[RMDB]
This 177-nucleotide RNA was probed chemically with DMS and 2A3. Reactivities are rounded to 0.1 and cut off at 0 and 3. The RNA was probed in 150 mM KOAc, 10 mM MgCl2 and 150 mM bicine (pH 8.5) at 24 C. For 2A3 the reverse transcriptase was SuperScript II with manganese.

RNA sequence: GGGAACGACUCGAGUAGAGUCGAAAAUGACAGUGUAUAGGCGCGAAAGCGUCUAACAAUUAGCAAUGACUGUAUGCUAAUUGACUAUUGUGAAAACAAUAGAAUGCUGUCUAACAGUCAUUGAUACGAUCUAGUUGUAUUUCGAUAUGGCUAGAUCAAAAGAAACAACAACAACAAC
Reactivity to DMS in 0.01 (KOAc 150mM, MgCl2 10mM, bicine 150mM(pH8.5), 24C), signal-to-noise 9, nucleotides 027 to 126: u020g000a010c000a010g010u000g010u010a020u000a000g000g000c000g000c000g000a120a120a160g010c000g010u000c000u000a000a010c000a000a000u000u000a000g010c000a050a170u000g000a010c000u000g010u000a230u000g000c000u000a000a000u000u000g000a020c010u000a000u000u000g010u000g000a170a080a130a020c000a010a010u000a000g000a070a010u000g000c000u000g000u000c000u000a060a020c000a000g000u000c000a150u040u030g010a120u030a110c210
Reactivity to 2A3 in 0.01 (KOAc 150mM, MgCl2 10mM, bicine 150mM(pH8.5), 24C), signal-to-noise 9, nucleotides 027 to 126: u060g000a000c000a000g000u000g000u010a010u000a010g000g000c000g000c000g030a040a030a020g000c000g000u000c000u000a000a000c000a000a000u000u000a000g000c000a010a030u050g000a000c000u000g000u000a010u030g000c000u000a000a000u000u000g000a000c000u000a000u000u000g000u010g080a040a020a000a010c000a000a000u000a000g000a000a000u010g000c000u000g000u000c000u000a010a000c000a000g000u000c000a010u010u210g050a020u030a060c080